[RMDB]
An RNA of 207 nucleotides, treated with DMS and 2A3 and read out base by base.
RNA sequence: GGGAACGACUCGAGUAGAGUCGAAAAGCGAAAGUUGCCACGAGACCGUAACUUUCGUAGUCAUUGAUAAAGGGGCAGGUCUCGCUCUUUUGUCAUUGCGGUUGCCUAGAGGCAUGGUCGUUUACCGAAAAGAGCUCAUUCUUCGGAAUGAGCUCAAGAUCGAUAUUACCUUCGGGUAAUAUCGAUCAAAAGAAACAACAACAACAAC
Reactivity to DMS in 0.01 (KOAc 150mM, MgCl2 10mM, bicine 150mM(pH8.5), 24C), signal-to-noise 1, nucleotides 027 to 156: g000c010g000a000a010a010g000u000u010g000c020c050a300c070g010a120g020a060c060c110g000u000a030a010c010u000u000u000c020g020u000a010g040u000c120a120u010u000g000a070u010a010a000a080g020g020g000g000c040a120g020g030u010c080u000c090g030c040u000c010u010u000u010u000g000u000c010a100u000u010g000c060g030g000u000u000g010c010c040u000a090g020a230g040g000c080a030u020g010g010u000c050g000u000u000u000a120c000c000g000a060a100a070a140g000a030g010c000u000c020a010u000u000c000u000u000c290g020g000a010a010u000g010a000g020c000u010c000a000a060
Reactivity to 2A3 in 0.01 (KOAc 150mM, MgCl2 10mM, bicine 150mM(pH8.5), 24C), signal-to-noise 2, nucleotides 027 to 156: g010c000g010a000a000a000g000u000u000g000c020c030a140c160g100a080g050a070c080c050g010u000a000a000c000u000u010u000c020g000u000a000g010u030c030a030u000u010g030a010u050a030a030a000g010g000g020g030c040a000g010g150u050c040u070c080g000c000u050c010u040u010u000u010g030u000c010a010u020u020g010c030g070g000u060u110g010c020c070u100a100g030a120g060g000c020a020u090g000g020u000c010g000u000u010u040a280c030c020g060a040a100a020a040g000a000g000c010u020c000a010u010u000c000u080u060c040g020g000a000a000u010g000a010g080c000u000c000a000a000
Overview
For 2A3 the reverse transcriptase was SuperScript II with manganese. Values are in units of 0.01, from 0 to 300, in steps of 10.